[RMDB]
The record gives the reactivity of an RNA of 207 nucleotides to 2A3. The data come from the RNA Mapping Database (RMDB), library M2RFPK. Conditions: 150 mM KOAc, 10 mM MgCl2 and 150 mM bicine (pH 8.5), 24 C. Reactivities are given for positions 27 through 156. For 2A3 the reverse transcriptase was SuperScript II with manganese.
RNA sequence: GGGAACGACUCGAGUAGAGUCGAAAACGACAAGGGUGUAAAGAUCGCUCUUUUACUCGGCAUGAUACCACCGUUAUCGGGUCAACAGAGUAGUUGCAAAUGACAUCAAUGCUCAGGGUUAUGCUCUAAAAGUUCGUACCCUUCGGGGUACGAACAACGAGACACAUGUCUUCGGACAUGUGUCUCGAAAAGAAACAACAACAACAAC
Reactivity to 2A3 in 0.01 (KOAc 150mM, MgCl2 10mM, bicine 150mM(pH8.5), 24C), signal-to-noise 1, nucleotides 027 to 156: c050g070a020c100a140a010g000g050g020u060g010u210a150a250a010g130a150u290c040g000c020u030c000u010u080u050u060a100c050u050c010g000g000c000a000u120g000a010u000a120c020c000a000c000c030g030u020u070a020u070c030g000g050g000u010c020a000a050c040a020g040a010g000u050a030g020u010u000g050c080a140a120a190u130g070a030c000a020u050c010a080a120u090g000c000u020c060a000g000g000g050u030u040a050u160g010c000u000c030u140a060a060a000a040g000u000u000c000g000u000a000c000c000c000u000u030c200g050g000g040g030u000a000c000g000a000a000c000a000a000